[RMDB]
RNA sequence: GGGAACGACUCGAGUAGAGUCGAAAAGUGCGGAGUGAAAUUCAUAGGAGCCUCGCCAUUGUGGCUGAACGCCGCGGUACUCCGCGUAGUCGCGACGUAAACGUUCUGUGGUCGCGUUCAGGCCUCACACCACGGGACGAUUCGUCGUCCCGUGGUGAAAAGAAACAACAACAACAAC
Reactivity to DMS in 0.01 (KOAc 150mM, MgCl2 10mM, bicine 150mM(pH8.5), 24C), signal-to-noise 1, nucleotides 027 to 126: g040u010g040c020g000g010a070g010u000g070a160a070a140u000u000c060a060u020a100g000g030a270g000c000c000u000c000g030c070c010a130u020u000g040u000g030g000c090u080g000a000a110c070g000c090c030g000c030g000g000u020a000c090u000c020c000g030c010g000u030a040g000u010c040g000c000g000a010c020g040u030a090a180a170c110g020u000u010c010u010g000u000g000g010u010c000g090c020g000u020u020c030a040g010g000c000c020u000c020a300
Reactivity to 2A3 in 0.01 (KOAc 150mM, MgCl2 10mM, bicine 150mM(pH8.5), 24C), signal-to-noise 2, nucleotides 027 to 126: g090u090g010c020g000g000a030g010u110g080a040a130a170u210u120c070a080u180a150g070g020a050g090c000c000u020c000g030c030c000a050u050u200g060u050g050g030c020u010g020a000a050c090g000c020c000g000c010g050g000u080a080c090u000c040c000g000c020g020u020a010g030u000c010g010c010g000a030c070g030u080a120a000a000c010g070u150u010c090u200g020u030g050g000u030c030g030c000g000u000u070c000a000g040g080c000c020u060c000a020
An RNA of 177 nucleotides, treated with DMS and 2A3 and read out base by base.
The DMS profile rests on 1,616 reads.
Source: RMDB library OK1LIB, as collected in RNAgym.
DMS adducts were read by reverse transcription with MarathonRT.
The reactions ran in a buffer of 150 mM KOAc, 10 mM MgCl2 and 150 mM bicine (pH 8.5), at 24 C.